[RMDB]
The data come from the RNA Mapping Database (RMDB), library OK1LIB.
Structure probing data (2A3 and DMS) for a 177-nucleotide construct.
The DMS profile rests on 1,181 reads.
The 2A3 profile rests on 1,363 reads.
RNA sequence: GGGAACGACUCGAGUAGAGUCGAAAAAGCGAGUACGUACUCCUAGAAAAUAGGAGUACUCCACGCGUAAAGUACUCGCAAGUACCAAAUCAAAGUAUCCGAUAAGGAUACACGCGUGGUCUACAAAGCCUAUGGCCAUAUUCGUAUGGCCAUAGGCAAAAGAAACAACAACAACAAC
Reactivity to 2A3 in 0.01 (KOAc 150mM, MgCl2 10mM, bicine 150mM(pH8.5), 24C), signal-to-noise 2, nucleotides 027 to 126: a000g000c010g010a010g000u000a000c040g010u010a000c000u040c000c000u020a020g110a070a250a030a050u010a020g000g000a000g000u000a000c000u000c000c000a000c000g020c000g010u070a100a160a080g000u000a000c000u000c010g000c000a000a040g010u020a010c000c000a080a000a090u240c160a150a080a000g010u000a000u000c000c000g070a120u090a290a040g000g000a000u000a000c030a010c020g000c030g000u000g000g020u060c000u090a290c160a110a050a010
Reactivity to DMS in 0.01 (KOAc 150mM, MgCl2 10mM, bicine 150mM(pH8.5), 24C), signal-to-noise 1, nucleotides 027 to 126: a190g000c000g040a000g000u010a010c000g010u000a000c000u050c000c000u050a000g000a260a050a110a020u000a000g040g000a060g070u010a000c070u050c010c000a000c040g000c030g010u000a070a020a070g020u000a010c000u000c000g000c040a080a030g000u000a070c000c000a060a170a080u000c300a110a100a090g000u000a070u000c000c000g000a040u150a170a140g020g000a000u010a000c000a060c000g000c000g110u000g030g000u080c140u000a020c210a090a120a060

The RNA was probed in 150 mM KOAc, 10 mM MgCl2 and 150 mM bicine (pH 8.5) at 24 C.